This 177-nucleotide RNA was probed chemically with DMS and 2A3. The 2A3 profile rests on 719 reads. DMS adducts were read by reverse transcription with MarathonRT. Values cover nucleotides 27 to 126. For DMS, 2,708 sequencing reads were counted. The reactions ran in a buffer of 150 mM KOAc, 10 mM MgCl2 and 150 mM bicine (pH 8.5), at 24 C.
RNA sequence: GGGAACGACUCGAGUAGAGUCGAAAAUGAUGAGUCUGAAGUGGUGGCUCAUUAAGUGAGUUUGGCAGUUUAUUAUGGGGUUUUCCGUUAGACACCAAAACCAGAGAGAAUACGAUUGUGACCCCGAAUACAUGUUGGCAUUCGUGCCAACAUGUAUAAAAGAAACAACAACAACAAC
Reactivity to DMS in 0.01 (KOAc 150mM, MgCl2 10mM, bicine 150mM(pH8.5), 24C), signal-to-noise 3, nucleotides 027 to 126: u000g000a020u000g010a020g000u010c010u010g000a100a080g040u010g000g020u000g000g010c020u010c010a020u010u010a030a100g020u000g000a060g020u000u010u000g020g030c030a120g010u010u000u000a040u000u010a070u000g010g010g020g010u010u000u000u010c030c030g010u010u000a070g010a040c070a150c030c030a030a030a040a120c040c020a090g010a100g000a110g010a090a070u010a070c090g010a110u010u010g000u020g000a150c100c000c000c030g030a200
Reactivity to 2A3 in 0.01 (KOAc 150mM, MgCl2 10mM, bicine 150mM(pH8.5), 24C), signal-to-noise 1, nucleotides 027 to 126: u080g020a030u010g030a010g020u000c020u120g140a250a070g070u040g100g060u070g000g020c000u000c020a010u000u010a010a050g090u000g090a090g020u030u080u030g000g040c010a010g010u060u120u050a070u050u030a080u080g030g070g010g030u000u000u230u020c030c020g010u060u030a020g000a000c020a020c060c030a030a120a020a000c000c000a020g050a000g000a000g050a240a110u050a120c080g050a080u030u140g100u040g040a050c000c020c000c020g000a000